[RMDB]
RNA sequence: GGGAACGACUCGAGUAGAGUCGAAAAUGACGGUCAAUCCGGCGCGUGCCGGCGGCGCCUACGGCUACGUCGACAUGGGUGGCUGGGUCGGCGGCCAGGCCGAAUACGUGCUGGUGCCCUACGCCGAACGACUGAGGACGUUCGCGUCCUCAGUCGUAAAAGAAACAACAACAACAAC
Reactivity to 2A3 in 0.01 (KOAc 150mM, MgCl2 10mM, bicine 150mM(pH8.5), 24C), signal-to-noise 1, nucleotides 027 to 126: u050g080a020c030g050g030u060c030a060a070u060c050c010g000g090c050g000c000g000u040g000c010c000g000g040c020g040g000c020g000c000c000u070a080c040g040g000c000u010a030c030g210u180c020g050a130c080a250u300g050g000g030u030g040g000c030u080g080g020g150u100c040g020g020c040g060g100c030c000a120g130g000c000c030g000a030a050u190a050c000g010u000g040c000u010g000g040u040g000c010c020c020u010a050c070g010c010c000g000a060
Reactivity to DMS in 0.01 (KOAc 150mM, MgCl2 10mM, bicine 150mM(pH8.5), 24C), signal-to-noise 1, nucleotides 027 to 126: u000g010a150c000g000g000u020c160a110a110u000c010c000g000g010c030g000c030g030u000g030c100c010g000g010c010g030g010c040g000c000c010u060a200c070g020g040c000u000a010c060g010u010c010g040a110c200a070u000g030g000g020u000g010g050c000u020g000g000g020u000c140g000g000c050g000g000c040c000a170g020g030c010c000g050a050a060u000a000c040g030u010g010c000u020g010g020u000g010c040c010c020u000a120c110g000c030c020g010a260